[RMDB]
Conditions: 150 mM KOAc, 10 mM MgCl2 and 150 mM bicine (pH 8.5), 24 C. The record gives the reactivity of an RNA of 207 nucleotides to 2A3. For 2A3, 553 sequencing reads were counted.
RNA sequence: GGGAACGACUCGAGUAGAGUCGAAAAGAUCUCGAACGUUCUCACACGUUCUCGUGUACUCGAACUCGAACUCGAACGAGUGAUCUCUCGUUCGUUCUCACGAGUUCACGUUCGUUCGAGAUCACGUACUCUCGUUCUCGUACACGAGUUCGAGUACUGUUACCUGGCCAUUCGUGGCCAGGUAACAAAAAGAAACAACAACAACAAC
Reactivity to 2A3 in 0.01 (KOAc 150mM, MgCl2 10mM, bicine 150mM(pH8.5), 24C), signal-to-noise 1, nucleotides 027 to 156: g030a010u000c000u000c000g040a000a000c000g010u020u010c020u160c030a010c000a010c020g300u300u170c190u190c120g070u080g030u110a080c080u080c160g040a020a020c000u010c010g000a030a000c010u000c030g000a000a000c000g020a010g060u060g190a300u010c070u030c000u000c120g040u080u000c040g000u020u020c130u000c050a110c010g000a000g060u000u010c000a020c050g020u010u060c000g000u000u000c000g000a000g000a000u000c020a000c110g020u030a060c000u000c000u000c080g000u000u000c020u040c000g090u220a180c100a020c110g020a050g000u010u000c000g020a000g000u090a040c030